[RMDB]
RNA sequence: GGGAACGACUCGAGUAGAGUCGAAAAGUGCUUGGAGCACGGGGGUCCCAGUGGAUCCGUGGGAUGCUCCUCCCGAUUCCGAUAUCCCUUCCCCCGAGAGGUCCCCCAGGAAUGGCGGGACCCCACUAACGCGUGAACUUCGGUUCACGCAAAAGAAACAACAACAACAAC
Reactivity to DMS in 0.01 (KOAc 150mM, MgCl2 10mM, bicine 150mM(pH8.5), 24C), signal-to-noise 4, nucleotides 027 to 129: g040u010g010c110u020u020g000g060a000g000c030a000c070g040g000g020g070g030u010c010c000c100a130g000u060g050g020a060u010c090c050g110u100g000g000g050a140u000g020c060u010c000c000u020c050c030c060g040a130u020u050c110c020g030a150u030a070u060c030c000c030u030u060c020c020c020c000c070g010a000g000a140g030g010u020c030c000c020c010c010a040g020g110a160a140u060g020g000c160g000g000g000a010c000c000c060c000a060c100u040a060a000c210
Reactivity to 2A3 in 0.01 (KOAc 150mM, MgCl2 10mM, bicine 150mM(pH8.5), 24C), signal-to-noise 6, nucleotides 027 to 129: g050u010g020c040u090u160g130g050a030g000c010a000c020g000g000g000g020g010u000c010c010c020a040g070u220g070g020a070u060c050c090g150u110g010g020g010a040u070g110c020u010c000c000u000c010c000c000g020a010u140u040c030c040g040a030u000a110u170c000c010c000u010u030c010c000c000c000c010g040a070g030a030g030g000u000c000c000c010c000c000a000g050g170a120a130u020g020g000c120g030g000g000a000c000c000c000c000a030c010u090a070a020c070